An RNA of 177 nucleotides, treated with 2A3 and DMS and read out base by base. The reactions ran in a buffer of 150 mM KOAc, 10 mM MgCl2 and 150 mM bicine (pH 8.5), at 24 C. For 2A3, 5,136 sequencing reads were counted.
RNA sequence: GGGAACGACUCGAGUAGAGUCGAAAACCAAGCCUUUCAAAUACAUUGCUUGGUAUACCUAAGCUAUUUGAAGUUACAUGCUCAUAUAUCUUAUCCAUUGUUGAACCUUCAAUUCUUGAAUGUGUCUGAUAUAGCUGAUGUUCGCAUCAGCUAUAUCAAAAGAAACAACAACAACAAC
Reactivity to 2A3 in 0.01 (KOAc 150mM, MgCl2 10mM, bicine 150mM(pH8.5), 24C), signal-to-noise 9, nucleotides 027 to 126: c000c000a010a000g010c000c020u110u130u140c140a130a140a040u200a130c150a110u080u120g000c000u000u020g030g030u030a040u090a080c000c000u030a030a010g020c010u020a040u080u050u050g100a130a030g030u120u120a110c090a100u300g020c010u010c040a010u030a010u030a020u080c010u040u040a060u070c090c020a060u040u090g020u060u050g030a040a030c010c010u020u020c050a080a140u160u050c080u110u100g080a120a050u110g080u020g030u100c030u020
Reactivity to DMS in 0.01 (KOAc 150mM, MgCl2 10mM, bicine 150mM(pH8.5), 24C), signal-to-noise 2, nucleotides 027 to 126: c000c000a100a030g050c040c170u030u000u000c150a090a040a120u020a090c210a000u000u000g000c000u040u000g000g000u000a030u000a000c060c000u000a080a000g000c040u000a000u000u000u000g030a030a100g030u010u010a100c190a100u070g010c040u000c000a050u000a000u000a090u000c010u000u010a080u000c030c100a110u000u010g000u000u000g030a120a020c000c090u000u020c050a020a140u000u000c170u030u000g040a050a060u040g030u000g000u020c060u040

Overview:
High 2A3 reactivity points to a flexible backbone, as in loops and unpaired stretches.